[RMDB]
RNA sequence: GGGAACGACUCGAGUAGAGUCGAAAAACUGACUGUAGGUGACAUCUUCGUACUUACCUCUCACUCUGUGGCUACCUUGACGGCGCCCACAAUUGUGAAUCAAGAGAGGUAUGUUAAAAUUACUGGGAAAGUGUAUGCUUCGGCAUACACAAAAGAAACAACAACAACAAC
Reactivity to 2A3 in 0.01 (KOAc 150mM, MgCl2 10mM, bicine 150mM(pH8.5), 24C), signal-to-noise 8, nucleotides 027 to 129: a000c040u030g090a010c010u020g010u030a020g030g050u020g020a010c000a060u020c020u090u070c080g050u010a030c010u010u020a000c000c000u000c000u000c010a040c020u050c040u030g010u010g010g000c020u090a140c020c000u050u100g140a110c100g020g030c010g010c030c050c020a010c000a020a150u140u100g040u020g110a070a130u180c090a170a030g010a000g010a010g040g010u050a000u000g000u000u020a000a010a020a020u100u080a070c060u050g040g020g030a050a150a060
Reactivity to DMS in 0.01 (KOAc 150mM, MgCl2 10mM, bicine 150mM(pH8.5), 24C), signal-to-noise 5, nucleotides 027 to 129: a130c090u030g040a070c050u020g000u030a060g050g010u000g040a090c060a000u050c090u030u000c080g000u010a000c000u040u000a040c000c000u020c030u010c030a090c100u030c030u030g040u000g000g000c000u010a160c050c000u010u100g040a080c220g020g020c260g030c300c010c010a020c040a050a060u020u010g040u040g030a140a110u070c200a000a170g060a050g000a030g000g000u020a020u000g020u000u000a030a020a030a040u000u000a070c070u040g030g040g020a090a030a080
An RNA of 170 nucleotides, treated with 2A3 and DMS and read out base by base. For DMS the reverse transcriptase was MarathonRT. Values cover nucleotides 27 to 129. The reactions ran in a buffer of 150 mM KOAc, 10 mM MgCl2 and 150 mM bicine (pH 8.5), at 24 C. 2A3 adducts were read by reverse transcription with SuperScript II with manganese.